[RMDB]
RNA sequence: GGGAACGACUCGAGUAGAGUCGAAAACGACCGCCUGACGGGUCGGACAUAGCGUCAGGAUCAUCCGUGACAGUCACCACGGUAAUCAUGUGUCUGAUGAUGGUUUUCCAUCUUAAUCUGACUGAGUCGUAGCAGUCUACAGUACUAUGACAUUAGAGAUACUCGUAUAGUUCGCUAUACGAGUAUCAAAAGAAACAACAACAACAAC
Reactivity to DMS in 0.01 (KOAc 150mM, MgCl2 10mM, bicine 150mM(pH8.5), 24C), signal-to-noise 3, nucleotides 027 to 156: c030g030a270c010c030g030c060c040u000g020a090c030g040g000g020u000c010g040g000a050c030a080u010a160g010c010g030u000c000a050g020g010a090u010c040a140u000c020c010g010u000g000a070c020a300g010u010c010a300c070c020a010c000g030g040u000a040a060u000c070a120u030g040u010g010u010c020u010g010a110u000g020a040u010g010g020u000u000u000u000c000c010a010u000c020u010u000a090a150u020c060u000g020a120c040u010g000a150g000u000c020g030u000a020g030c010a030g010u000c060u010a140c120a070g000u000a030c020u000a030u010g010a030c010a180u010u010a100g000a300
Reactivity to 2A3 in 0.01 (KOAc 150mM, MgCl2 10mM, bicine 150mM(pH8.5), 24C), signal-to-noise 5, nucleotides 027 to 156: c020g000a010c000c000g020c000c000u000g000a000c000g000g030g000u010c040g050g070a060c070a080u190a040g110c010g010u000c000a000g000g000a010u080c040a030u030c000c010g010u010g020a030c000a000g010u000c000a000c010c000a000c000g010g060u090a020a070u090c090a060u090g000u010g010u000c000u010g030a050u050g000a000u000g010g070u060u130u200u180c010c000a010u010c000u010u100a190a110u130c140u110g010a000c000u000g000a000g010u000c010g010u000a000g000c010a010g000u000c120u130a090c070a060g040u060a060c000u000a010u020g010a010c020a030u030u220a080g040a000

Chemical mapping of a 207-nucleotide RNA with DMS and 2A3. The reactions ran in a buffer of 150 mM KOAc, 10 mM MgCl2 and 150 mM bicine (pH 8.5), at 24 C. Reactivities are given for positions 27 through 156. The data come from the RNA Mapping Database (RMDB), library OK3TST.